[RMDB]
RNA sequence: GGGAACGACUCGAGUAGAGUCGAAAACAGGUAGCCCAGACCUUCAAGGCCACGGUGCGUUGCGACGCACGGUCUGAUUCUUCACAACGACGUUCACCGCGUCUUCUUCCAUCCCCCUGGGGCAGUGUAUAACCAGCAGCCUUCGGGCUGCUGGUAACUAUCAACCUCACUUCGGUGAGGUUGAUAGAAAAGAAACAACAACAACAAC
Reactivity to DMS in 0.01 (KOAc 150mM, MgCl2 10mM, bicine 150mM(pH8.5), 24C), signal-to-noise 1, nucleotides 027 to 156: c010a100g000g020u000a120g070c010c010c010a160g010a040c000c000u000u000c090a100a050g020g000c010c070a040c030g040g010u020g010c040g040u000u000g040c240g010a160c000g040c040a090c030g010g030u000c040u020g010a130u010u000c000u000u040c050a100c060a150a120c030g000a030c020g010u010u000c060a120c110c090g000c010g010u000c010u030u000c060u000u010c020c050a110u020c010c020c010c040c050u040g040g000g020g150c050a070g070u000g020u010a180u000a040a070c000c010a030g030c000a000g020c010c000u000u080c240g080g030g060c010u000g000c010u000g010g050u000a010a040